An RNA of 177 nucleotides, treated with DMS and 2A3 and read out base by base. Conditions: 150 mM KOAc, 10 mM MgCl2 and 150 mM bicine (pH 8.5), 24 C.
RNA sequence: GGGAACGACUCGAGUAGAGUCGAAAACGACCCCGGUUCGCCGGGGUCGAAAUAUAGGCGCAGUGGGCUAGCGCCACUCAAAAGGCCCAUUAAAUAAGAAUAAAAGGCAUUAGUUCGCUAAUGCCAAGUUACAAUAAAUCUUCGGAUUUAUUGUAACAAAAGAAACAACAACAACAAC
Reactivity to DMS in 0.01 (KOAc 150mM, MgCl2 10mM, bicine 150mM(pH8.5), 24C), signal-to-noise 1, nucleotides 027 to 126: c030g060a030c060c000c000c000g030g020u010u000c210g050c010c010g050g020g040g020u000c010g000a010a060a060u000a140u000a200g020g000c020g040c010a120g000u000g020g000g010c010u000a060g010c010g000c000c000a050c020u000c020a050a020a050a040g000g020c010c010c010a090u010u020a100a030a120u010a090a070g000a120a140u010a050a110a090a080g000g010c010a020u000u000a000g000u010u020c180g010c000u000a000a000u010g000c000c000a010a030
Reactivity to 2A3 in 0.01 (KOAc 150mM, MgCl2 10mM, bicine 150mM(pH8.5), 24C), signal-to-noise 2, nucleotides 027 to 126: c010g020a000c010c030c000c020g040g080u040u050c240g050c090c000g070g000g020g000u000c010g000a010a000a000u050a000u000a040g000g000c010g020c060a020g130u070g060g010g010c020u030a020g000c010g000c000c010a010c000u030c000a000a030a030a060g050g000c000c000c000a000u010u030a000a010a010u100a040a010g040a060a020u160a100a160a020a020g000g000c000a000u010u000a000g020u030u070c220g000c090u000a000a000u000g000c000c010a000a000

Background: The data come from the RNA Mapping Database (RMDB), library M2PK50. For 2A3, 3,239 sequencing reads were counted. Reactivities are given for positions 27 through 126. DMS adducts were read by reverse transcription with MarathonRT. 2A3 adducts were read by reverse transcription with SuperScript II with manganese.